This 207-nucleotide RNA was probed chemically with DMS and 2A3. For DMS, 3,824 sequencing reads were counted. 2A3 adducts were read by reverse transcription with SuperScript II with manganese.
RNA sequence: GGGAACGACUCGAGUAGAGUCGAAAAAAACAGCAAGGUAGCUCGCUAAUACUAGCCUUGUUUGUCAUCAUUAUAUUGACCUUAUUGGGCAGUGUUUUAAUGCGCAUGAUCUCCACCAGUAGUGAAACAGUUUCUCAAGAGAUAUUAGGAACUCGCGAUGAUCUCGCGAGUUCGCUCGCGAGAUCAUAAAAGAAACAACAACAACAAC
Reactivity to DMS in 0.01 (KOAc 150mM, MgCl2 10mM, bicine 150mM(pH8.5), 24C), signal-to-noise 2, nucleotides 027 to 156: a060a020a040c030a050g010c010a040a040g040g010u010a040g020c060u010c130g040c060u000a150a130u010a050c030u000a120g020c000c010u000u000g030u010u000u000g040u000c010a140u000c050a080u000u000a100u000a070u000u000g010a060c020c020u000u000a120u000u000g020g000g030c010a010g030u010g010u000u000u010u000a030a060u000g000c030g000c040a090u020g000a080u000c020u010c010c010a030c020c030a110g010u000a100g020u000g020a100a070a090c060a080g000u000u000u010c040u010c030a090a140g000a110g010a110u000a080u000u000a110g010g000a040a080c010u010c020g000c080g020
Reactivity to 2A3 in 0.01 (KOAc 150mM, MgCl2 10mM, bicine 150mM(pH8.5), 24C), signal-to-noise 2, nucleotides 027 to 156: a000a000a000c050a010g010c040a060a000g030g040u080a000g020c020u040c150g030c060u100a030a030u090a140c080u070a070g090c000c000u040u010g000u090u070u160g030u040c040a110u000c010a000u070u230a080u060a030u150u160g090a180c000c000u050u070a100u190u130g000g000g000c000a020g050u000g070u160u040u050u070a060a020u070g010c020g000c070a100u080g010a050u060c040u050c060c020a080c000c010a060g070u130a050g050u080g100a060a080a020c030a080g000u000u040u000c040u040c060a060a040g040a020g010a060u080a190u250u170a080g010g080a030a070c000u040c050g030c050g080